[RMDB]
RNA sequence: GGGAACGACUCGAGUAGAGUCGAAAAUGGUCAGUACCCUCUGACCAGAGAGAGGCAUGACCACCAGAUUUCCAGAUGACCCAAAGCUAGGAAGAAUGUGGGCUGGAUGCGGGGUGGUGACUGUGAGAAAAGGGGCUACCCCACAGGAUGGGCCCGAACCGGUUUUAUGAUUCGUCAUAAAACCGGUAAAAGAAACAACAACAACAAC
Reactivity to 2A3 in 0.01 (KOAc 150mM, MgCl2 10mM, bicine 150mM(pH8.5), 24C), signal-to-noise 1, nucleotides 027 to 156: u030g000g000u010c000a000g030u040a110c000c040c020u000c000u000g110a120c000c090a010g000a000g010a000g020a030g000g050c020a030u020g010a030c000c010a000c000c000a060g030a300u090u060u100c000c000a020g040a120u090g100a090c010c010c000a070a080a020g070c050u090a050g000g030a020a010g110a030a030u190g000u160g070g000g000c000u040g020g000a060u040g020c030g000g010g150g030u120g050g040u030g000a150c030u030g010u220g040a120g140a080a080a020a050g000g000g060g000c000u000a000c000c000c030c000a020c030a000g040g000a130u070g040g030g040c020c010c000g000a030